[RMDB]
RNA sequence: GGGAACGACUCGAGUAGAGUCGAAAACAGUGUCAGCAUGUCUCGUGGUGGUGGCUCCUGUGGACGCGCAGCGGUCGGUGCCUGUCAGCAACACUGUGCAGUUCGCGGCCGCGCUGCAGAAUGCUGGAUCGCUGUGUGGAUUCGUCCACACAGCGAUAAAAGAAACAACAACAACAAC
Reactivity to DMS in 0.01 (KOAc 150mM, MgCl2 10mM, bicine 150mM(pH8.5), 24C), signal-to-noise 1, nucleotides 027 to 126: c050a070g010u010g010u000c000a030g010c020a030u000g000u000c020u000c140g040u000g010g040u010g030g040u000g010g020c040u000c190c150u000g060u010g010g010a030c040g000c030g000c010a030g010c050g010g010u010c100g030g010u000g000c110c070u000g010u010c050a100g000c020a090a090c060a130c020u000g010u010g000c000a100g030u000u000c020g050c010g000g000c010c020g030c030g000c000u000g000c000a030g000a070a030u000g000c000u000g000g000
Reactivity to 2A3 in 0.01 (KOAc 150mM, MgCl2 10mM, bicine 150mM(pH8.5), 24C), signal-to-noise 2, nucleotides 027 to 126: c020a040g050u010g070u160c020a000g090c000a010u050g210u280c000u050c100g010u050g030g020u040g050g130u060g000g000c020u040c050c120u210g010u050g040g000a020c020g030c000g020c020a020g010c080g120g050u100c070g070g040u050g000c020c030u150g220u200c040a010g030c000a000a020c030a000c060u010g060u070g000c000a020g010u040u070c030g020c010g000g020c030c000g010c000g000c010u010g000c000a010g030a020a020u030g010c000u010g030g010